RNA sequence: GGGAACGACUCGAGUAGAGUCGAAAAGCCUCGGCGACGAGGGUGGUUUCGCACCUUCUGUUGAGUCCACCAAGGCAGCUCUCGACCUCAUCGUUGAGGCAAUUGAGAAGGCUGGCUUCAAGCCAGGGGAGAUCGAUCUGUUCGCAGAUCGAUCUCCAAAAGAAACAACAACAACAAC
Reactivity to 2A3 in 0.01 (KOAc 150mM, MgCl2 10mM, bicine 150mM(pH8.5), 24C), signal-to-noise 1, nucleotides 027 to 126: g000c000c000u000c000g010g000c000g000a020c020g000a010g000g020g030u070g020g070u030u080u140c120g040c020a040c010c000u070u030c080u070g050u080u120g040a010g040u010c020c010a040c070c020a120a110g040g000c030a090g000c050u010c010u040c080g120a090c010c000u010c020a040u010c020g020u030u010g010a010g000g000c000a020a060u140u150g010a120g070a090a060g080g000c010u010g020g010c000u220u210c180a080a010g000c000c010a030g000g040
Reactivity to DMS in 0.01 (KOAc 150mM, MgCl2 10mM, bicine 150mM(pH8.5), 24C), signal-to-noise 1, nucleotides 027 to 126: g000c030c000u000c050g040g000c070g030a000c080g010a100g000g010g020u010g030g000u000u020u000c190g020c020a180c010c030u000u000c040u030g010u020u010g000a080g010u000c030c010a100c130c050a020a040g020g020c070a120g050c070u000c030u010c020g000a170c070c010u000c010a040u000c070g000u020u000g000a030g000g000c010a050a020u040u000g000a090g010a040a080g020g030c000u030g000g000c000u000u040c200a120a070g020c020c000a000g000g010
An RNA of 177 nucleotides, treated with 2A3 and DMS and read out base by base. For DMS the reverse transcriptase was MarathonRT. DMS (dimethyl sulfate) methylates the pairing face of unpaired adenines and cytosines. The reactions ran in a buffer of 150 mM KOAc, 10 mM MgCl2 and 150 mM bicine (pH 8.5), at 24 C.